[RMDB]
RNA sequence: GGGAACGACUCGAGUAGAGUCGAAAAGAUCAAUUAUGAUUGCAAUGUAAUAUGUCAAGGCAGACAUAUCUAGCUGUCGCCUUAGCUAGAGAUUGCCGAUUUAUUGCUUUCAUAAGAACGGCUAGAAAUGACUGGCGGUAUUCGUACCGCCAGUCAUAAAAGAAACAACAACAACAAC
Reactivity to 2A3 in 0.01 (KOAc 150mM, MgCl2 10mM, bicine 150mM(pH8.5), 24C), signal-to-noise 1, nucleotides 027 to 126: g070a100u170c000a030a120u000u010a000u030g020a000u000u030g060c000a000a000u040g030u300a000a160u000a050u260g190u160c060a070a000g010g000c010a000g070a120c030a140u140a030u050c000u000a000g030c000u000g260u240c060g290c090c000u080u080a020g100c030u000a000g000a030g020a130u000u080g000c020c050g000a020u010u050u000a020u000u000g010c000u010u000u000c000a000u010a020a030g020a150a010c030g020g000c060u020a050g130a010a090
Reactivity to DMS in 0.01 (KOAc 150mM, MgCl2 10mM, bicine 150mM(pH8.5), 24C), signal-to-noise 1, nucleotides 027 to 126: g020a110u000c070a090a110u010u000a000u000g010a000u000u000g010c010a000a000u000g020u000a020a040u020a120u000g010u010c130a080a090g000g000c040a080g000a080c180a060u000a140u000c000u000a010g000c010u000g020u000c220g000c270c080u010u020a010g000c000u000a020g000a020g010a140u000u000g020c000c000g000a070u000u020u000a010u000u000g000c000u000u000u000c000a010u000a020a000g000a080a080c180g000g010c070u020a050g010a080a060
The record gives the reactivity of an RNA of 177 nucleotides to 2A3 and DMS. Values are in units of 0.01, from 0 to 300, in steps of 10.